[RMDB]
RNA sequence: GGGAACGACUCGAGUAGAGUCGAAAAGACACUUAAGGAAACUGUGGUAGUAAUUGCACUACAUAUAUGGUCAAUGCCUGAGCAUGCGUGGCCUGUGUCAUUGGAGGAGCUCCGGCUGCUCGUUAGGACCUUGGACUCAAUUCGUUGAGUCCAAGGUAAAAGAAACAACAACAACAAC
Reactivity to DMS in 0.01 (KOAc 150mM, MgCl2 10mM, bicine 150mM(pH8.5), 24C), signal-to-noise 3, nucleotides 027 to 126: g040a030c050a010c040u010u020a150a040g000g000a100a120a120c100u010g010u010g010g000u010a040g000u010a120a060u030u010g020c170a050c010u000a020c040a070u040a070u030a040u000g010g000u000c070a040a050u020g010c020c070u010g020a100g000c050a050u020g000c130g040u010g000g000c000c000u020g010u000g000u010c030a190u010u010g000g000a070g000g000a060g010c030u000c100c050g000g010c030u000g000c030u000c040g000u050u000a100g010g010
Reactivity to 2A3 in 0.01 (KOAc 150mM, MgCl2 10mM, bicine 150mM(pH8.5), 24C), signal-to-noise 7, nucleotides 027 to 126: g010a000c020a000c050u150u160a100a050g120g050a060a080a050c060u070g040u080g180g000u020a030g010u010a120a300u180u240g060c090a000c010u040a000c050a020u160a020u030a030u140g030g020u030c040a130a080u140g030c000c020u040g030a030g020c040a030u100g010c030g050u060g020g010c000c020u020g010u010g020u040c030a090u060u180g080g020a060g020g040a020g010c010u020c020c050g070g000c010u030g000c010u000c010g070u090u140a090g020g080
Source: RMDB library OK1LIB, as collected in RNAgym. Chemical mapping of a 177-nucleotide RNA with DMS and 2A3. For DMS the reverse transcriptase was MarathonRT. 2A3 adducts were read by reverse transcription with SuperScript II with manganese. The DMS profile rests on 5,318 reads. Reactivities are rounded to 0.1 and cut off at 0 and 3. Conditions: 150 mM KOAc, 10 mM MgCl2 and 150 mM bicine (pH 8.5), 24 C.